[RMDB]
Source: RMDB library TTRINS, as collected in RNAgym. The record gives the reactivity of an RNA of 177 nucleotides to DMS.
RNA sequence: GGGAACGACUCGAGUAGAGUCGAAAAGAUAUGGAGUUUGCAGGUACUGUGGGACGCGAUAAGUCUGACCAUCGGAAACGAUGGUAGACUUUUGACGCGUUAGCAGUACCUGCAAACUCCUAAGUCAGAAUAAAGAAUGGUUCGCCAUUCUUUAUUCAAAAGAAACAACAACAACAAC
Reactivity to DMS in 0.01 (KOAc 150mM, MgCl2 10mM, bicine 150mM(pH8.5), 24C), signal-to-noise 4, nucleotides 027 to 126: g010a050u010a300u000g000g000a020g010u000u000u000g010c000a010g000g000u010a010c000u010g030u000g000g030g000a020c000g020c000g000a140u010a010a010g020u000c000u000g020a040c000c000a010u000c010g010g010a140a120a250c010g010a010u010g000g020u000a010g000a010c000u000u000u000u010g010a220c070g010c000g010u000u000a300g000c000a020g010u000a000c010c000u010g000c000a000a000a000c010u000c000c000u000a010a060g000u010c060a160

Description:
Conditions: 150 mM KOAc, 10 mM MgCl2 and 150 mM bicine (pH 8.5), 24 C.